[RMDB]
RNA sequence: GGGAACGACUCGAGUAGAGUCGAAAAAGUUAUGAGUUCGCUCAUAACUACAGCGAAAGGCGCUCGGACCCGCAGUCCGCCCAAGGCAUCCCAGCCUGUCCAAGUUGGUAUAUUUCGAUAUACCAAAAGCCUUAAGCUAUUUCGAUAGCUUAAGGCUAAAAGAAACAACAACAACAAC
Reactivity to DMS in 0.01 (KOAc 150mM, MgCl2 10mM, bicine 150mM(pH8.5), 24C), signal-to-noise 2, nucleotides 027 to 126: a030g010u000u000a000u000g010a020g000u000u020c250g020c010u010c000a010u000a000a020c000u010a080c180a100g010c050g000a130a080a110g020g000c080g020c060u000c060g020g000a090c070c090c090g040c140a120g000u000c020c000g010c040c010c040a100a040g000g000c020a090u000c010c010c020a190g000c020c030u000g000u000c070c120a110a120g010u010u000g010g000u000a010u000a020u000u020u030c150g000a040u000a000u010a000c000c000a000a020a120

Description:
The data come from the RNA Mapping Database (RMDB), library M2PK50. This 177-nucleotide RNA was probed chemically with DMS. Reactivities are rounded to 0.1 and cut off at 0 and 3. The reactions ran in a buffer of 150 mM KOAc, 10 mM MgCl2 and 150 mM bicine (pH 8.5), at 24 C.